[RMDB]
RNA sequence: GGGAACGACUCGAGUAGAGUCGAAAAAGAGAUAUAAGGCCGCUCCUUAUAUUGCGACUUGCUUAAACUUGUGACUGAAUAAUCAACGAUUUAACAAGUUCAAGUGGUUAAUAGCCACCCGCAUAACCCGUUCCGUGUGAUUCGUCACACGGAACGGAAAAGAAACAACAACAACAAC
Reactivity to 2A3 in 0.01 (KOAc 150mM, MgCl2 10mM, bicine 150mM(pH8.5), 24C), signal-to-noise 1, nucleotides 027 to 126: a000g030a010g000a000u000a000u010a050a000g040g000c100c050g040c050u140c000c000u050u000a000u000a000u050u030g020c040g060a040c000u000u000g080c000u020u010a090a000a000c000u010u060g000u000g060a020c000u150g210a200a000u180a060a000u110c040a090a000c150g050a080u000u000u000a010a000c040a080a000g080u000u080c040a200a020g000u060g060g000u060u070a020a000u020a250g080c000c000a000c000c050c020g000c020a000u060a040a000c000